[RMDB]
RNA sequence: GGGAACGACUCGAGUAGAGUCGAAAACAUGGGGAAGCAAUAAUUUCUAAUACCAGCGAAAGCAGUGACAUAUUUGCCGAUCCUAAUUCGUUUGAAAAGGAUACUAUGCCCCUAACGCAAGAACUGACGGCCACUAUAUCUUCGGAUAUAGUGGCCGAAAAGAAACAACAACAACAAC
Reactivity to 2A3 in 0.01 (KOAc 150mM, MgCl2 10mM, bicine 150mM(pH8.5), 24C), signal-to-noise 1, nucleotides 027 to 126: c030a000u000g000g000g010g030a090a090g000c000a070a000u220a000a100u000u160u130c060u140a230a000u030a200c040c040a000g000c000g000a150a000a000g000c000a000g060u000g250a030c060a010u260a120u150u180u300g030c000c070g030a000u000c000c000u110a160a160u000u000c000g030u030u230u000g120a000a000a030a000g000g000a000u000a150c090u000a040u040g060c000c000c000c060u000a000a000c000g030c220a070a070g030a130a010c000u110g130a000